[RMDB]
RNA sequence: GGGAACGACUCGAGUAGAGUCGAAAACUCGGUUAAUUCGUUAACCGAGACUUCUUAAACAUCUUUUCAACUCAUAGAUGGUAAAUAUUCAAAGAUGUUCGAAUGCGAUAAACUUCGGUUUAUCGAAGUAAAUCUACUGAUUCGUCAGUAGAUUUACAAAAGAAACAACAACAACAAC
Reactivity to 2A3 in 0.01 (KOAc 150mM, MgCl2 10mM, bicine 150mM(pH8.5), 24C), signal-to-noise 9, nucleotides 027 to 126: c000u000c000g000g000u020u020a020a020u070u070c100g020u030u010a000a000c000c000g000a000g000a000c010u060u030c010u030u140a090a060a010c000a010u000c000u030u050u090u110c080a080a070c040u040c130a150u120a200g120a160u100g030g020u040a060a140a080u220a090u110u090c040a030a020a000g010a010u010g020u000u050c060g110a170a070u190g060c010g010a000u000a000a010a010c010u020u060c190g030g000u000u010u000a000u010c000g000a050a000
Reactivity to DMS in 0.01 (KOAc 150mM, MgCl2 10mM, bicine 150mM(pH8.5), 24C), signal-to-noise 9, nucleotides 027 to 126: c000u000c000g010g000u000u000a010a030u000u020c160g010u000u000a010a000c000c010g010a010g000a040c080u000u000c020u000u010a100a040a040c010a000u000c000u010u000u000u000c130a070a080c110u000c120a190u000a100g010a080u000g010g010u010a060a080a120u010a090u010u010c130a040a030a020g000a020u000g000u000u000c140g000a070a080u000g010c010g000a010u000a000a000a010c000u000u010c170g020g000u000u000u000a000u000c000g010a030a090
Source: RMDB library M2PK50, as collected in RNAgym. An RNA of 177 nucleotides, treated with 2A3 and DMS and read out base by base. For 2A3, 23,686 sequencing reads were counted. The reactions ran in a buffer of 150 mM KOAc, 10 mM MgCl2 and 150 mM bicine (pH 8.5), at 24 C. DMS adducts were read by reverse transcription with MarathonRT.